[RMDB]
RNA sequence: GGGAACGACUCGAGUAGAGUCGAAAAAUUCAGAGACUAAACGAAGAUGGGGACGCCAAAAUAUAGGCGUCUUUUCUGAUAUAGUCCGACUUAUAGCUGGAAGGCUAUAACGUUUGUGUAGAUGCUCUGGGCCGCACGCGCGCUACACUGACAGAGACAAUUAUUUGUUCUUCGGAACAAAUAAUUGAAAAGAAACAACAACAACAAC
Reactivity to 2A3 in 0.01 (KOAc 150mM, MgCl2 10mM, bicine 150mM(pH8.5), 24C), signal-to-noise 4, nucleotides 027 to 156: a000u160u120c040a030g060a000g010a060c020u050a040a130a070c060g040a040a040g040a050u150g090g000g060g000a000c000g000c010c000a030a060a150a030u300a080u190a180g010g000c000g000u000c000u010u000u000u000c000u000g010a010u020a000u000a080g010u000c000c020g000a000c020u030u030a000u000a000g000c000u010g110g060a120a020g100g000c010u000a000u010a030a020c060g000u010u060u080g030u010g000u010a020g020a210u120g030c010u020c050u100g050g080g040c030c030g080c030a050c060g060c000g000c010g000c010u030a010c010a020c030u050g040a020c020a050g080a000g000a040
Reactivity to DMS in 0.01 (KOAc 150mM, MgCl2 10mM, bicine 150mM(pH8.5), 24C), signal-to-noise 2, nucleotides 027 to 156: a090u000u000c020a110g010a170g000a050c020u000a030a060a130c070g010a110a040g000a070u000g000g010g000g000a020c010g010c010c000a080a060a070a140u000a160u000a140g030g010c020g000u000c000u020u000u000u000c030u000g000a170u000a140u000a050g010u000c020c010g000a090c020u000u000a030u000a000g000c010u000g040g070a190a220g020g040c010u000a020u000a030a060c080g000u000u020u000g000u000g000u000a040g010a110u000g000c020u010c050u000g010g030g050c020c070g070c040a070c090g010c080g030c060g020c000u000a010c000a030c020u010g010a090c010a090g000a180g000a210